[RMDB]
RNA sequence: GGGAACGACUCGAGUAGAGUCGAAAAUUGAUAUCUGCUAAAACCCGGUGCAUUCAUCAAUGCAGGUUAAGCCAAAGGGAUGUCCCGACCUGAGGCCGACAAUCCAGGGAACCGGAUGUCAUCACGUAAAACCGUCAGUUCUUCGGAACUGACGGAACUCCUUAGUAUCCUUCGGGAUACUAAGGAGAAAAGAAACAACAACAACAAC
Reactivity to DMS in 0.01 (KOAc 150mM, MgCl2 10mM, bicine 150mM(pH8.5), 24C), signal-to-noise 1, nucleotides 027 to 156: u010u000g010a100u010a030u010c040u000g040c010u000a080a000a130a200c020c000c030g050g140u000g000c030a030u000u000c170a120u050c070a050a160u000g030c000a090g000g010u000u000a130a010g010c020c000a060a300a020g000g000g000a030u000g040u040c000c000c000g050a150c020c000u000g000a300g000g000c020c000g020a100c150a110a200u000c000c010a050g000g030g010a150a170c160c010g000g000a060u000g020u000c060a140u000c120a040c140g040u000a070a070a100a150c000c010g000u000c000a010g000u020u010c000u000u020c280g050g000a010a020c040u000g000a000c000g000g010a050a000
Reactivity to 2A3 in 0.01 (KOAc 150mM, MgCl2 10mM, bicine 150mM(pH8.5), 24C), signal-to-noise 2, nucleotides 027 to 156: u050u010g010a010u020a000u020c000u000g020c050u080a030a030a110a160c020c000c010g090g070u090g000c010a030u010u080c040a140u130c080a220a000u070g010c000a030g050g000u040u120a050a010g000c010c000a010a060a040g000g000g020a050u030g030u000c000c000c000g010a010c000c000u000g010a000g000g000c020c000g010a010c050a110a040u060c030c070a030g000g000g020a010a010c010c000g000g000a000u020g050u010c020a130u010c020a010c130g090u100a050a040a060a260c000c000g000u000c000a000g020u030u000c000u050u160c180g070g000a000a000c000u000g000a000c010g000g000a000a000
An RNA of 207 nucleotides, treated with DMS and 2A3 and read out base by base.
Reactivities are given for positions 27 through 156.
The reactions ran in a buffer of 150 mM KOAc, 10 mM MgCl2 and 150 mM bicine (pH 8.5), at 24 C.
The 2A3 profile rests on 1,202 reads.
For 2A3 the reverse transcriptase was SuperScript II with manganese.